[RMDB]
RNA sequence: GGGAACGACUCGAGUAGAGUCGAAAAUGCCAAGUCAAAGACAGCUCUCUACUUCAGAAAAGUACUUCUGUCCCUCCUGACUCUCCUCAGACUGGACAUUAGUAAACUAGGACCAUUUAAUCCAGGGUGCUUACAAUGCUUUCGAGCAUUGUAAGCAAAAAGAAACAACAACAACAAC
Reactivity to DMS in 0.01 (KOAc 150mM, MgCl2 10mM, bicine 150mM(pH8.5), 24C), signal-to-noise 1, nucleotides 027 to 126: u030g020c040c070a090a100g010u020c060a110a100a050g000a030c000a080g000c160u020c030u000c040u000a020c010u000u020c070a100g010a020a020a090a080g000u000a000c060u010u010c010u010g000u010c000c000c060u010c040c010u030g000a030c060u000c040u000c110c030u000c040a040g020a080c060u000g020g020a020c120a020u020u010a050g020u000a040a060a080c060u000a050g000g020a160c060c040a120u000u020u000a140a110u010c030c020a080g010g040g020